[RMDB]
RNA sequence: GGGAACGACUCGAGUAGAGUCGAAAAGAUAUGGAUCGGAAGGCAACGGUGAAGAUACUCGGAAACGAGUAUUGGAGUUGCUUCCCGAUCCUAAGUCAAAACCCUUGCGUGUUCGCACGCAAGGGAAGUUUAGACGUUUCUUCGGAAACGUCUAAACAAAAGAAACAACAACAACAAC
Reactivity to 2A3 in 0.01 (KOAc 150mM, MgCl2 10mM, bicine 150mM(pH8.5), 24C), signal-to-noise 1, nucleotides 027 to 126: g020a000u040a030u200g000g000a000u010c010g000g040a010a010g050g000c000a010a010c060g300g300u070g000a030a000g000a020u000a000c000u000c040g030g030a070a080a000c030g000a000g000u000a000u000u010g000g000a030g020u020u010g000c000u010u010c010c010c010g010a000u010c010c010u000a000a000g020u000c060a000a040a120a250c000c010c000u030u020g010c030g010u070g030u040u050c140g080c140a000c000g000c000a000a000g000g000g010a010a000
Reactivity to DMS in 0.01 (KOAc 150mM, MgCl2 10mM, bicine 150mM(pH8.5), 24C), signal-to-noise 2, nucleotides 027 to 126: g000a040u010a300u040g020g020a000u000c000g050g010a020a010g000g000c000a000a020c020g000g000u000g000a240a220g000a010u000a000c010u000c010g000g010a150a160a140c020g020a030g020u000a010u000u030g000g000a070g010u000u000g000c020u000u000c000c000c000g020a000u020c010c000u000a030a060g000u010c020a060a100a180a170c010c000c000u000u000g000c000g010u000g000u000u000c300g030c000a000c000g020c000a000a010g000g030g020a010a010